[RMDB]
RNA sequence: GGGAACGACUCGAGUAGAGUCGAAAAGGUAGAACUAGCUUCUAAGUUCUUCUCUGCUCCUGGGAGCCAUUAGCUUAGGUAGUCAGGAAAUACCCUAGGCCGGGUGCAGUGGCUCAUGCCUGUAAUAAUUACGUCGUACGUUCGCGUACGACGUAAUAAAAGAAACAACAACAACAAC
Reactivity to DMS in 0.01 (KOAc 150mM, MgCl2 10mM, bicine 150mM(pH8.5), 24C), signal-to-noise 2, nucleotides 027 to 126: g020g000u010a020g000a020a010c030u000a080g010c240u000u010c060u000a050a070g000u000u000c000u010u000c010u000c050u000g000c150u000c000c030u000g000g000g000a100g040c000c100a030u000u010a240g000c020u000u000a050g040g030u000a010g010u000c150a080g040g000a160a100a150u000a090c120c000c000u000a070g040g000c030c090g000g030g010u020g020c070a050g000u000g020g000c040u000c030a080u030g010c050c050u030g000u000a090a120u000a130
Reactivity to 2A3 in 0.01 (KOAc 150mM, MgCl2 10mM, bicine 150mM(pH8.5), 24C), signal-to-noise 1, nucleotides 027 to 126: g030g050u050a000g020a000a000c020u010a060g090c090u190u080c060u070a140a000g030u000u000c050u010u010c050u000c010u010g030c010u020c020c000u000g090g080g000a020g000c010c000a010u080u120a040g000c010u040u030a120g050g070u070a070g160u070c070a000g000g100a060a160a170u260a130c000c050c000u020a040g050g000c030c040g030g050g000u050g000c020a010g050u010g030g070c000u000c030a000u130g030c000c000u130g060u060a140a160u090a140